[RMDB]
RNA sequence: GGGAACGACUCGAGUAGAGUCGAAAAUUACACAGGUACGUGCGCUAGCACGCCACCGAGUCACACAUGAAACACUACCCGUCAGUGACUGUGACCCUCACUCCGGGAGGAGGACACCGGUAGCCGGGAUUUCAUGCAAAUUCGUUUGCAUGAAAUCAAAAGAAACAACAACAACAAC
Reactivity to DMS in 0.01 (KOAc 150mM, MgCl2 10mM, bicine 150mM(pH8.5), 24C), signal-to-noise 8, nucleotides 027 to 126: u030u040a090c130a070c060a130g010g010u010a170c030g010u000g000c010g010c250u060a130g020c010a010c000g010c090c070a020c020c010g000a150g000u010c040a030c040a070c170a110u010g000a090a060a080c110a110c040u020a120c030c010c060g000u010c080a070g010u010g010a070c120u000g010u010g000a070c030c000c000u000c030a110c020u000c010c020g000g000g000a100g000g000a090g010g000a060c080a040c030c020g000g000u010a070g010c200c070g010g000
Reactivity to 2A3 in 0.01 (KOAc 150mM, MgCl2 10mM, bicine 150mM(pH8.5), 24C), signal-to-noise 9, nucleotides 027 to 126: u120u080a050c080a000c000a060g020g030u040a010c010g010u010g010c020g030c120u090a080g010c010a000c010g020c030c010a010c000c000g010a010g010u020c010a010c000a000c010a090u140g110a050a100a000c040a030c050u150a130c020c020c000g090u110c060a030g010u010g040a030c040u030g020u030g040a040c000c000c000u020c020a080c030u010c020c010g040g020g000a040g020g020a040g000g040a020c030a020c040c020g020g030u060a020g050c030c010g080g010
An RNA of 177 nucleotides, treated with DMS and 2A3 and read out base by base. The reactions ran in a buffer of 150 mM KOAc, 10 mM MgCl2 and 150 mM bicine (pH 8.5), at 24 C. DMS adducts were read by reverse transcription with MarathonRT.